[RMDB]
RNA sequence: GGGAACGACUCGAGUAGAGUCGAAAAGCGGGCGCUGUUGGGUAAUAGCUUCUGCGCCAUUGCGCACUUUUUUCAGUUUGCCGCUUUCGUCAAGUUUAUUGAUAUCGCGUCGCGCAGUGGCAGGCGAGAUAGUAUCAGUCUUCGGACUGAUACUAUCAAAAGAAACAACAACAACAAC
Reactivity to DMS in 0.01 (KOAc 150mM, MgCl2 10mM, bicine 150mM(pH8.5), 24C), signal-to-noise 5, nucleotides 027 to 126: g020c030g010g010g010c140g020c020u000g010u000u000g010g010g010u010a070a070u000a150g010c030u000u000c040u000g010c050g010c000c020a030u000u000g010c010g010c030a140c070u000u010u010u000u010u000c140a060g000u000u000u000g020c100c020g010c060u000u000u000c140g020u000c030a040a040g010u010u010u020a100u010u000g000a030u000a060u000c100g010c040g000u000c110g010c010g010c080a010g030u000g000g010c000a100g010g010c090g010a120
Reactivity to 2A3 in 0.01 (KOAc 150mM, MgCl2 10mM, bicine 150mM(pH8.5), 24C), signal-to-noise 5, nucleotides 027 to 126: g030c030g000g010g010c020g010c050u050g030u080u060g100g030g030u120a070a050u050a090g020c000u060u050c030u110g050c040g000c020c000a020u040u110g010c040g020c000a060c030u130u090u030u010u150u210c030a040g010u010u090u080g030c020c010g000c000u050u090u130c060g030u020c010a020a040g030u100u280u230a160u090u110g040a020u020a020u090c050g010c050g070u080c060g000c010g000c010a010g000u010g000g000c010a010g020g050c020g000a100
About this RNA:
An RNA of 177 nucleotides, treated with DMS and 2A3 and read out base by base. DMS adducts were read by reverse transcription with MarathonRT. Source: RMDB library OK2TST, as collected in RNAgym. For DMS, 19,382 sequencing reads were counted.